The data come from the RNA Mapping Database (RMDB), library 15KLIB. An RNA of 170 nucleotides, treated with DMS and 2A3 and read out base by base. The reactions ran in a buffer of 150 mM KOAc, 10 mM MgCl2 and 150 mM bicine (pH 8.5), at 24 C. For 2A3, 4,700 sequencing reads were counted.
RNA sequence: GGGAACGACUCGAGUAGAGUCGAAAACCCUGAUCCUUUAUUGGGGGGUACACUCGAGGAGUGGAAGGCGCUGCCCGGGGGGAACCGGAUUUACCUACGGGAAUCCCUGGGUUCCUCUGAUGUCCAGGUACUGCGCUGUUCGCAGCGCAGAAAAGAAACAACAACAACAAC
Reactivity to DMS in 0.01 (KOAc 150mM, MgCl2 10mM, bicine 150mM(pH8.5), 24C), signal-to-noise 1, nucleotides 027 to 129: c000c000c020u040g020a100u070c000c000u010u010u010a070u020u020g000g000g000g000g000g000u030a040c150a100c000u050c050g020a000g080g000a050g070u010g000g000a100a100g000g000c170g030c060u000g010c050c000c040g000g000g000g000g000g000a160a120c000c000g020g000a070u060u090u100a000c000c100u030a100c200g000g010g010a050a270u060c030c030c060u060g030g020g050u030u000c020c010u020c050u130g030a110u000g020u000c050c050a000g000g000u020a100
Reactivity to 2A3 in 0.01 (KOAc 150mM, MgCl2 10mM, bicine 150mM(pH8.5), 24C), signal-to-noise 2, nucleotides 027 to 129: c040c000c000u030g070a050u070c030c030u080u090u110a140u220u160g000g000g020g000g000g040u040a020c000a050c000u060c000g040a030g010g000a040g030u020g010g010a030a010g020g000c000g040c050u080g000c030c020c000g000g000g000g000g000g000a000a040c000c000g020g000a000u040u020u300a140c040c010u040a030c030g000g000g000a000a000u010c030c000c000u040g060g000g000u010u010c000c000u060c020u080g030a010u100g020u000c050c030a000g070g020u060a080